Source: RMDB library OK1LIB, as collected in RNAgym. The record gives the reactivity of an RNA of 177 nucleotides to DMS and 2A3. Values cover nucleotides 27 to 126.
[RMDB]
RNA sequence: GGGAACGACUCGAGUAGAGUCGAAAACAGCGGCAAAAGCCGCAAUGUGGCGGCGCCAGAAGAAGACUGGCGAUGUAACGCGAAGUAACCGAAAGAAAAGUCGGAGCGCCACACUUCGCUUACAAAACAUACGUCUGACCUUCGGGUCAGACGUAUGAAAAGAAACAACAACAACAAC
Reactivity to DMS in 0.01 (KOAc 150mM, MgCl2 10mM, bicine 150mM(pH8.5), 24C), signal-to-noise 1, nucleotides 027 to 126: c120a120g000c000g010g000c060a250a100a150a040g080c040c010g080c000a050a000u020g000u010g000g000c060g010g000c010g000c000c000a060g000a010a110g020a120a210g000a070c000u000g000g000c010g030a100u040g000u090a000a150c260g000c060g000a000a000g000u000a030a220c040c010g000a030a020a030g000a100a060a040a110g000u000c000g000g000a080g000c000g000c050c070a000c130a080c000u000u000c000g000c000u010u020a000c000a050a090a100a090
Reactivity to 2A3 in 0.01 (KOAc 150mM, MgCl2 10mM, bicine 150mM(pH8.5), 24C), signal-to-noise 2, nucleotides 027 to 126: c030a000g000c010g030g000c020a080a150a300a050g000c000c000g000c000a010a040u080g010u030g050g000c020g000g000c000g000c000c000a030g020a100a070g080a060a010g080a080c000u000g000g010c010g020a050u160g030u060a050a030c070g000c000g000a000a000g030u070a060a050c020c050g020a090a050a020g300a000a140a070a000g120u050c000g010g060a030g080c050g000c010c000a040c000a000c000u020u000c000g000c000u000u000a010c030a020a100a060a000